RNA sequence: GGGAACGACUCGAGUAGAGUCGAAAAAACGUGGUGGCGAUCGGUGCCAUCCAGAAACGCACCGUCCGAAUCGCUUUGACGUUCCGCUUGGGGUUGGGUGCGGCGGGGCGCGGCUGCGCUUGAGACACCUUUCUGACGAGUUCGCUCGUCAGAAAGGAAAAGAAACAACAACAACAAC
Reactivity to 2A3 in 0.01 (KOAc 150mM, MgCl2 10mM, bicine 150mM(pH8.5), 24C), signal-to-noise 2, nucleotides 027 to 126: a000a010c080g010u100g010g000u030g020g000c010g010a110u020c030g060g040u040g010c010c000a020u020c000c060a040g110a050a240a000c060g020c010a010c010c030g090u130c050c030g080a070a070u020c030g000c030u120u000u050g060a020c010g000u030u000c000c000g020c090u050u190g020g000g000g050u060u150g060g040g010u080g040c020g000g030c000g000g000g000g000c060g030c040g070g020c040u100g010c010g000c030u030u000g030a010g000a030c000a010
Reactivity to DMS in 0.01 (KOAc 150mM, MgCl2 10mM, bicine 150mM(pH8.5), 24C), signal-to-noise 1, nucleotides 027 to 126: a020a020c170g010u000g050g020u000g000g000c050g030a120u000c050g010g000u020g020c000c130a050u150c090c060a240g000a130a170a100c300g030c000a000c000c010g000u020c200c090g020a050a040u000c030g000c060u010u030u040g000a070c040g000u000u000c020c030g010c070u020u000g040g000g000g020u020u020g000g020g010u000g010c100g000g010c060g000g020g000g000c000g010c030g000g000c020u000g000c000g000c040u000u000g000a060g000a230c190a090